[RMDB]
RNA sequence: GGGAACGACUCGAGUAGAGUCGAAAAGAUAUGGACUCCACAUAAGACAGCUGUGGGUCGGAAACGACCCAUACAGCAAUGACGUGUGAAGAGUCCUAAGUCAAAAGUUGUAGCUUCGGCUACAACAGUUCUCUAGAUGGUUCGCCAUCUAGAGAACAAAAGAAACAACAACAACAAC
Reactivity to 2A3 in 0.01 (KOAc 150mM, MgCl2 10mM, bicine 150mM(pH8.5), 24C), signal-to-noise 2, nucleotides 027 to 126: g010a000u030a010u020g000g000a000c000u010c000c000a000c000a020u090a060a160g260a210c030a050g010c010u020g000u030g000g000g000u000c000g000g010a020a020a000c000g000a010c000c060c010a020u110a000c010a000g040c000a000a240u190g090a040c070g010u000g010u010g170a250a300g030a030g020u000c010c000u000a000a010g010u000c000a060a040a150a150g000u010u000g010u020a000g010c020u050u030c300g160g000c010u010a010c000a000a000c000a010
Reactivity to DMS in 0.01 (KOAc 150mM, MgCl2 10mM, bicine 150mM(pH8.5), 24C), signal-to-noise 2, nucleotides 027 to 126: g000a020u000a030u010g010g000a030c000u010c010c010a000c000a010u020a080a300g020a300c060a060g000c010u000g010u000g010g010g040u010c000g030g000a020a030a030c000g030a000c000c000c000a030u010a020c140a000g000c000a300a100u020g000a050c070g020u000g020u000g000a300a170g000a010g030u000c000c010u030a000a060g010u000c020a190a110a120a120g020u000u000g000u000a000g010c000u000u000c300g040g010c000u000a010c000a000a000c000a070
This 177-nucleotide RNA was probed chemically with 2A3 and DMS. The DMS profile rests on 1,471 reads.